[RMDB]
RNA sequence: GGGAACGACUCGAGUAGAGUCGAAAAAUCUUGAUGAGACCUCACCCACCGUCCCUUGUCGACGUUCUUCUGAAACCCGGACUUGACACAAUACCCGGCAUUCAACCAGGGCAUGGGGCCGGGAAUAACGACAAUACGGGUUCGCCCGUAUUGUCGUAAAAGAAACAACAACAACAAC
Reactivity to 2A3 in 0.01 (KOAc 150mM, MgCl2 10mM, bicine 150mM(pH8.5), 24C), signal-to-noise 3, nucleotides 027 to 126: a020u010c010u040u060g060a090u060g060a060g030a080c000c000u110c050a040c000c010c010a040c000c000g070u050c000c000c000u020u040g030u050c010g010a040c070g030u030u010c020u100u000c030u030g130a140a090a070c000c000c000g030g000a050c020u040u140g100a030c090a000c030a230a000u170a260c000c000c000g010g000c000a100u200u250c010a040a100c030c010a040g050g090g000c040a110u040g020g000g060g000c000c010g000g000g070a010a010u130a030
Reactivity to DMS in 0.01 (KOAc 150mM, MgCl2 10mM, bicine 150mM(pH8.5), 24C), signal-to-noise 1, nucleotides 027 to 126: a010u030c030u010u020g010a070u000g010a120g000a060c010c000u020c060a050c030c000c000a080c020c140g000u000c000c010c000u060u000g000u000c080g020a100c080g000u000u000c030u000u000c130u100g020a110a110a050c090c020c010g000g070a180c060u030u020g030a110c190a050c130a100a110u060a070c000c000c000g000g000c000a090u050u000c140a100a170c150c020a060g040g020g020c170a160u000g000g000g020g010c000c000g000g000g000a100a000u010a070